[RMDB]
RNA sequence: GGGAACGACUCGAGUAGAGUCGAAAAAGGAAUGCACGAUCGCGGGCCGCUUCCGCUUUCUCGUAGGAGAACUCUCGAUCCUCCUCCUGAUCGUCCGGGUGGAACACCAGGUUAAACGACAACUCCGCGCCCUGGAUCUCCGUUAUCAGGUUGAUCGGGGCGAUAAUUUAUUCGUAAAUUAUCGCCCAAAAGAAACAACAACAACAAC
Reactivity to 2A3 in 0.01 (KOAc 150mM, MgCl2 10mM, bicine 150mM(pH8.5), 24C), signal-to-noise 2, nucleotides 027 to 156: a020g140g010a120a010u160g040c040a020c070g050a150u110c050g000c030g070g000g030c000c050g060c030u090u020c020c030g020c060u060u050u010c060u020c000g100u070a040g000g090a050g030a140a100c010u040c000u000c110g050a060u040c020c010u000c000c000u010c000c040u040g020a060u020c020g030u030c060c010g050g070g000u190g080g060a190a100c110a070c040c000a000g020g020u100u140a130a180a010c070g150a050c080a110a030c130u120c110c060g020c000g000c000c000c000u000g030g010a010u000c030u000c010c000g000u050u020a040u130c040a000g050g000u050u070g050a090u040c070g010
Structure probing data (2A3) for a 207-nucleotide construct. The reactions ran in a buffer of 150 mM KOAc, 10 mM MgCl2 and 150 mM bicine (pH 8.5), at 24 C. The 2A3 profile rests on 757 reads.